This 177-nucleotide RNA was probed chemically with 2A3 and DMS. The data come from the RNA Mapping Database (RMDB), library 15KREP. For 2A3 the reverse transcriptase was SuperScript II with manganese. Conditions: 150 mM KOAc, 10 mM MgCl2 and 150 mM bicine (pH 8.5), 24 C.
RNA sequence: GGGAACGACUCGAGUAGAGUCGAAAACAUCCUUUCUUGCCUGCACCCACUUUUCGAGGAUGUCUUCCCUUCCUCCCCUCCGGGAUUUCUUCUGAUCGGACUGGCUCAUCCUCGGAAACGGGGGCGGACCAAUGUUACGGUUCGCCGUAACAUUGGUAAAAGAAACAACAACAACAAC
Reactivity to 2A3 in 0.01 (KOAc 150mM, MgCl2 10mM, bicine 150mM(pH8.5), 24C), signal-to-noise 2, nucleotides 027 to 126: c020a060u080c020c000u050u080u000c040u020u070g120c040c020u050g000c030a190c070c010c010a100c100u000u000u000u010c010g010a000g000g010a000u000g020u020c030u030u020c000c010c000u020u050c040c030u050c020c000c000c000u050c010c000g030g000g000a070u060u100u070c030u130u000c020u050g010a040u050c030g020g000a020c050u000g020g050c030u030c000a000u000c000c000u000c000g040g010a010a020a020c020g000g000g000g020g000c000g010g010
Reactivity to DMS in 0.01 (KOAc 150mM, MgCl2 10mM, bicine 150mM(pH8.5), 24C), signal-to-noise 2, nucleotides 027 to 126: c210a080u000c020c030u000u000u010c030u010u000g040c140c000u010g020c030a100c000c000c010a110c190u010u000u010u010c040g000a020g000g000a030u010g010u010c100u000u010c030c030c000u010u010c010c080u000c010c020c020c040u000c060c050g000g000g000a110u000u010u010c050u000u000c120u010g000a130u010c100g010g000a050c220u010g010g000c120u000c000a040u010c000c000u010c000g030g000a000a000a060c210g000g010g000g010g030c000g000g020